[RMDB]
RNA sequence: GGGAACGACUCGAGUAGAGUCGAAAAACGGCGCUAGGUACGCCUAGCGCCGAACUCUUGUCAAGAACUUAUUCUGUGACCUGCGUGACAUUUAGCCACAUCACAGUCUGAGUUCUUGCUGAGCGAAUAGGGAAAACGAUUUCGAUCGUUUUCCCUAAAAAGAAACAACAACAACAAC
Reactivity to 2A3 in 0.01 (KOAc 150mM, MgCl2 10mM, bicine 150mM(pH8.5), 24C), signal-to-noise 3, nucleotides 027 to 126: a010c030g000g000c000g040c000u010a000g000g050u070a030c220g000c000c000u000a000g000c000g020c000c000g000a000a000c020u000c000u020u080g210u190c010a000a000g000a000a000c000u010u010a000u000u000c000u030g010u010g040a040c000c100u230g080c080g040u000g060a050c030a120u180u180u300a070g000c030c000a000c000a010u010c000a000c000a000g000u000c000u010g000a010g000u000u000c000u000u000g000c000u020g000a010g030c000g070a100a040
Reactivity to DMS in 0.01 (KOAc 150mM, MgCl2 10mM, bicine 150mM(pH8.5), 24C), signal-to-noise 1, nucleotides 027 to 126: a060c000g000g000c010g010c050u000a000g010g020u000a020c240g010c010c000u000a010g010c030g000c010c010g000a000a000c040u050c000u020u010g000u020c000a020a010g010a000a000c000u000u000a020u000u000c000u000g000u000g000a000c260c080u000g000c250g000u030g000a080c040a220u010u020u010a180g020c020c020a010c070a180u010c000a000c000a000g000u000c020u050g010a060g000u000u000c000u000u010g000c000u000g000a000g040c110g000a030a080
This 177-nucleotide RNA was probed chemically with 2A3 and DMS. For 2A3 the reverse transcriptase was SuperScript II with manganese. For DMS the reverse transcriptase was MarathonRT. Conditions: 150 mM KOAc, 10 mM MgCl2 and 150 mM bicine (pH 8.5), 24 C. The data come from the RNA Mapping Database (RMDB), library RFM100. The 2A3 profile rests on 1,609 reads.